An RNA of 207 nucleotides, treated with 2A3 and DMS and read out base by base.
Conditions: 150 mM KOAc, 10 mM MgCl2 and 150 mM bicine (pH 8.5), 24 C.
For DMS the reverse transcriptase was MarathonRT.
Values cover nucleotides 27 to 156.

RNA sequence: GGGAACGACUCGAGUAGAGUCGAAAACCGUAGGCAUCUGUAGCUGCCCACCCUAAGACAGACAGAUUCGAAAGAGUCUGUUCGAGGGUGGGAACUACAGUGAGGGAUGCCUAAACGGAAAUCGGUUUUUCAGUACUUCGGUACUGAAAAACCGAAAUCAUAUACACGUCUUCGGACGUGUAUAUGAAAAAGAAACAACAACAACAAC
Reactivity to 2A3 in 0.01 (KOAc 150mM, MgCl2 10mM, bicine 150mM(pH8.5), 24C), signal-to-noise 2, nucleotides 027 to 156: c000c000g020u000a010g000g000c010a000u020c220u300g030u040a000g010c000u020g010c000c000c000a000c000c000c000u070a180a020g010a010c010a000g010a000c000a000g030a020u010u010c010g020a040a010a000g010a000g010u000c000u000g010u020u010c000g010a000g000g000g000u000g000g000g020a000a000c010u160a030c000a000g000u000g030a110g040g040g000a000u000g000c000c000u000a010a000a000c010g030g070a010a110a130u060c000g000g000u010u010u000u000u000c000a000g000u000a000c000u040u100c260g130g000u000a000c000u000g000a000a000a000a000a000c000c010g000a000a000a000
Reactivity to DMS in 0.01 (KOAc 150mM, MgCl2 10mM, bicine 150mM(pH8.5), 24C), signal-to-noise 1, nucleotides 027 to 156: c000c020g050u000a040g020g010c000a040u000c030u000g000u000a300g030c030u000g000c000c000c010a040c000c020c010u000a250a190g000a090c300a050g000a050c000a080g020a100u000u000c020g000a120a120a130g000a050g010u000c000u000g030u000u000c010g010a020g020g030g010u010g020g010g000a000a000c030u000a130c000a020g000u000g000a200g000g000g040a000u000g030c000c000u000a000a020a050c060g020g000a060a060a090u010c010g020g000u000u010u000u040u010c000a010g030u010a020c020u000u000c300g060g000u020a000c000u040g000a000a020a000a000a020c000c000g000a000a020a050